Background:
An RNA of 177 nucleotides, treated with DMS and 2A3 and read out base by base. It was measured as part of the RMDB library OK1LIB. The 2A3 profile rests on 57,480 reads.
[RMDB]
RNA sequence: GGGAACGACUCGAGUAGAGUCGAAAAGAGCUUAAUUCUAUAUUGUCAUGGUAGAACAUGACAUGUAACGGUUAAGCUUGGUUGGGAACCGUUCGCAUGUUCUACUAUGUGAAGAUAUUCCAACAUAGAUAGUAUUCAUUUUCGAGUGAGUGCUAUCAAAAGAAACAACAACAACAAC
Reactivity to DMS in 0.01 (KOAc 150mM, MgCl2 10mM, bicine 150mM(pH8.5), 24C), signal-to-noise 7, nucleotides 027 to 126: g010a040g010c140u010u030a060a050u030u000c030u000a070u010a030u010u000g010u010c000a000u000g010g010u000a040g000a050a050c000a010u000g010a090c100a050u020g020u020a010a050c160g000g000u000u000a040a070g000c050u000u020g010g010u020u020g010g000g010a050a030c020c010g000u000u000c010g000c020a000u000g000u010u000c030u000a030c030u000a000u000g010u010g000a060a070g010a040u010a060u000u000c000c010a080a100c130a090u020a110
Reactivity to 2A3 in 0.01 (KOAc 150mM, MgCl2 10mM, bicine 150mM(pH8.5), 24C), signal-to-noise 9, nucleotides 027 to 126: g040a010g010c080u130u150a030a010u090u010c020u020a020u010a040u030u100g080u100c000a010u000g000g010u010a010g010a030a000c000a010u010g140a140c030a090u090g050u040a010a010c020g010g010u040u120a070a020g060c000u050u090g130g010u150u140g020g010g020a020a010c020c000g010u010u010c010g000c010a010u010g010u030u000c000u020a010c000u010a000u000g000u010g050a030a020g020a020u040a060u070u010c010c000a030a030c020a140u120a060